Overview:
Chemical mapping of a 207-nucleotide RNA with 2A3. High 2A3 reactivity points to a flexible backbone, as in loops and unpaired stretches. Conditions: 150 mM KOAc, 10 mM MgCl2 and 150 mM bicine (pH 8.5), 24 C. Values cover nucleotides 27 to 156.
RNA sequence: GGGAACGACUCGAGUAGAGUCGAAAAGUUGUGUAACUUCAUUUAAAUGAAUUGAAACAACUUUAAUACAAGUGGAUGUAGGAUAACCGUCCGUCCUUUACAUUGGUAUAAAAGUGAUCUAAAAUUCGGCAGGGACGAGUCUUCGGACUCGUCCCAAGUGGUGUGAAGGAUUCGUCCUUCACACCACAAAAGAAACAACAACAACAAC
Reactivity to 2A3 in 0.01 (KOAc 150mM, MgCl2 10mM, bicine 150mM(pH8.5), 24C), signal-to-noise 1, nucleotides 027 to 156: g000u020u000g000u000g010u000a010a060c020u020u000c020a080u070u200u300a200a180a150u070g000a010a000u050u000g030a090a010a000c000a000a000c000u040u020u040a070a010u090a000c060a130a030g030u060g140g060a010u060g020u170a040g020g010a030u030a080a160c000c010g000u020c010c000g000u000c000c000u030u120u030a050c010a030u000u110g070g020u120a050u120a120a050a010a000g120u160g030a030u080c070u150a180a080a120a100u120u070c080g050g000c050a090g050g050g010a020c020g000a000g010u010c000u000u010c100g020g020a000c000u060c000g030u020c000c030c000a000a000